[RMDB]
RNA sequence: GGGAACGACUCGAGUAGAGUCGAAAACUGGGCUGCUGGGUUUGGUGGUGCACACCUGUAAUCCCAGCUACUUAGGAGACUGAGGCGGGGAGGAUCAGUUGAGCCCAGGAGUUCAAGACCAGCCUGGACAAUAUAGGAAGACCCCAUCUCCAAAACACCCAUAAUUAGUCUUCGGACUAAUUAUGGGAAAAGAAACAACAACAACAAC
Reactivity to 2A3 in 0.01 (KOAc 150mM, MgCl2 10mM, bicine 150mM(pH8.5), 24C), signal-to-noise 2, nucleotides 027 to 156: c020u010g020g020g050c020u080g000c010u030g020g020g010u140u270u090g000g040u040g000g110u280g100c150a000c000a000c100c000u020g050u100a020a060u080c000c000c000a000g020c000u010a000c000u010u060a020g010g010a060g000a030c040u040g010a000g070g050c080g000g070g020g000a000g040g030a080u050c040a020g040u070u060g030a020g000c000c010c000a000g000g000a030g010u040u070c080a070a010g050a080c000c030a020g050c000c020u000g000g010a070c060a140a050u140a050u120a190g070g060a060a020g000a040c010c010c000c010a050u030c070u050c010c040a000a120a040a030c040a030
The record gives the reactivity of an RNA of 207 nucleotides to 2A3.
Conditions: 150 mM KOAc, 10 mM MgCl2 and 150 mM bicine (pH 8.5), 24 C.
Source: RMDB library OK3TST, as collected in RNAgym.
For 2A3 the reverse transcriptase was SuperScript II with manganese.